[RMDB]
RNA sequence: GGGAACGACUCGAGUAGAGUCGAAAAGAAGUACAGUUCGCUGUACUUCAAAUUCCCACCACGGCCGCCGCCGCCGCCGCCUCCACCGCCGCCACCACCAAAAAAGCAUUUAGUUCGCUAAAUGCAAGCUAUACUAAUCGUUCGCGAUUAGUAUAGCAAAAGAAACAACAACAACAAC
Reactivity to 2A3 in 0.01 (KOAc 150mM, MgCl2 10mM, bicine 150mM(pH8.5), 24C), signal-to-noise 1, nucleotides 027 to 126: g000a000a010g000u000a010c010a000g000u020u070c200g070c090u010g000u000a000c000u020u000c010a000a010a000u030u020c000c000c000a010c020c010a040c000g070g000c000c000g010c030c010g030c020c010g020c020c000g020c020c000g050c000c000u010c000c030a050c000c000g000c000c000g030c010c000a010c020c000a030c000c000a070a140a000a030a000a010g010c000a000u010u020u000a020g040u030u050c230g000c130u010a000a010a010u020g020c000a000a020
Reactivity to DMS in 0.01 (KOAc 150mM, MgCl2 10mM, bicine 150mM(pH8.5), 24C), signal-to-noise 3, nucleotides 027 to 126: g000a010a030g020u000a000c000a000g000u000u020c140g010c000u010g010u010a000c000u000u000c000a010a110a190u000u000c000c000c000a190c170c070a110c120g010g020c020c050g030c050c040g010c050c040g000c060c040g030c020c030g000c050c050u000c020c030a030c060c040g030c040c040g010c040c030a060c000c040a080c050c070a010a040a070a080a100a100g010c010a000u000u000u000a020g020u000u010c200g020c000u000a000a020a010u000g000c000a100a060
The record gives the reactivity of an RNA of 177 nucleotides to 2A3 and DMS.
For DMS, 2,151 sequencing reads were counted.
Reactivities are given for positions 27 through 126.
The RNA was probed in 150 mM KOAc, 10 mM MgCl2 and 150 mM bicine (pH 8.5) at 24 C.
For 2A3 the reverse transcriptase was SuperScript II with manganese.
For DMS the reverse transcriptase was MarathonRT.